[RMDB]
Conditions: 150 mM KOAc, 10 mM MgCl2 and 150 mM bicine (pH 8.5), 24 C. Chemical mapping of a 177-nucleotide RNA with 2A3. For 2A3, 567 sequencing reads were counted.
RNA sequence: GGGAACGACUCGAGUAGAGUCGAAAACUGGACACUUUCACGCGACUUGAGGAGGAAAUUAACUGGUCACCUCAGACCUCAGCAGAUAUUUACACACAGUUGGAGAUGAACUGGAAGGAAUUCUCCCAGUGCGGGAUACCUUCGGGUAUCCCGCACUAAAAGAAACAACAACAACAAC
Reactivity to 2A3 in 0.01 (KOAc 150mM, MgCl2 10mM, bicine 150mM(pH8.5), 24C), signal-to-noise 2, nucleotides 027 to 126: c030u060g000g000a020c000a000c120u080u200u140c070a020c080g100c000g060a100c000u010u010g000a020g020g010a120g000g070a040a060a190u170u090a140a150c050u100g040g040u000c060a020c090c000u060c050a040g000a100c010c000u000c000a040g000c030a030g000a060u080a110u300u270u060a010c130a000c000a000c000a040g060u050u080g050g030a090g000a100u090g000a020a030c000u010g110g000a000a030g010g040a140a030u100u040c020u000c080c000c000

Overview: For 2A3 the reverse transcriptase was SuperScript II with manganese.